[RMDB]
RNA sequence: GGGAACGACUCGAGUAGAGUCGAAAAGCGUACUACGUGGAUACGAAUAAGAGCGACGAUCACGAGAAACGUGGUCCCAAAUAGGACCACGUCUCGUGGGAGCUCGCUGAACCACGUAUCGCAAACCUGCCACUCGUCUUCGGACGAGUGGCAGGAAGUAUGUACCGAACUUCGGUUCGGUACAUACAAAAGAAACAACAACAACAAC
Reactivity to 2A3 in 0.01 (KOAc 150mM, MgCl2 10mM, bicine 150mM(pH8.5), 24C), signal-to-noise 2, nucleotides 027 to 156: g000c040g040u090a100c080u010a020c080g010u000g020g030a060u060a300c150g150a260a110u280a300a180g070a000g060c010g080a130c000g020a040u080c000a000c010g000a010g010a050a150a000c010g000u020g000g000u040c000c020c010a140a290a070u300a090g000g000a000c000c000a000c010g030u000c000u000c000g000u000g000g000g000a020g010c020u010c020g000c000u000g040a040a000c000c000a000c010g000u000a000u120c010g000c000a020a020a090c000c000u020g050c000c000a010c000u000c000g000u000c020u040u070c280g110g000a000c000g000a010g000u000g020g000c010a000g000g000a000a010
The record gives the reactivity of an RNA of 207 nucleotides to 2A3. High 2A3 reactivity points to a flexible backbone, as in loops and unpaired stretches. It was measured as part of the RMDB library RNAMAK. The RNA was probed in 150 mM KOAc, 10 mM MgCl2 and 150 mM bicine (pH 8.5) at 24 C.